This 177-nucleotide RNA was probed chemically with DMS and 2A3.
Conditions: 150 mM KOAc, 10 mM MgCl2 and 150 mM bicine (pH 8.5), 24 C.
For DMS, 1,846 sequencing reads were counted.
The data come from the RNA Mapping Database (RMDB), library OK1LIB.
The 2A3 profile rests on 889 reads.
RNA sequence: GGGAACGACUCGAGUAGAGUCGAAAAAGGGUCGCCGAGUCGGCCGAACAAGUCUUGGUAACCGCGGCGGUGCUCGAAGACAUCCCUUCGGGCUGGGAUGCUCGCAAGGUGCAUAUCGACCUGCGUGCACGGCUGGGAGUUUCGACUCCCAGCCGUGAAAAGAAACAACAACAACAAC
Reactivity to DMS in 0.01 (KOAc 150mM, MgCl2 10mM, bicine 150mM(pH8.5), 24C), signal-to-noise 1, nucleotides 027 to 126: a100g060g000g030u000c000g010c090c030g000a080g020u000c050g000g040c000c000g000a020a030c050a110a150g000u000c000u020u030g030g000u000a100a060c060c110g010c030g000g000c030g000g000u030g000c030u000c000g000a120a060g000a090c090a070u010c050c020c000u010u000c020g000g000g030c050u000g000g010g020a140u010g030c020u000c010g000c090a040a090g030g000u020g000c060a040u000a150u000c090g000a110c030c000u020g010c020g070u010g000
Reactivity to 2A3 in 0.01 (KOAc 150mM, MgCl2 10mM, bicine 150mM(pH8.5), 24C), signal-to-noise 1, nucleotides 027 to 126: a000g010g000g010u010c000g010c030c000g000a020g140u230c070g050g000c000c000g000a010a010c060a080a020g070u010c080u200u140g050g050u070a060a080c000c000g010c030g020g000c000g020g040u050g000c020u010c020g050a000a000g040a000c040a080u060c020c000c000u000u000c020g000g000g000c000u040g000g030g000a050u080g000c010u020c000g030c000a030a040g010g000u090g030c110a000u130a120u210c130g010a040c000c030u010g030c030g010u000g000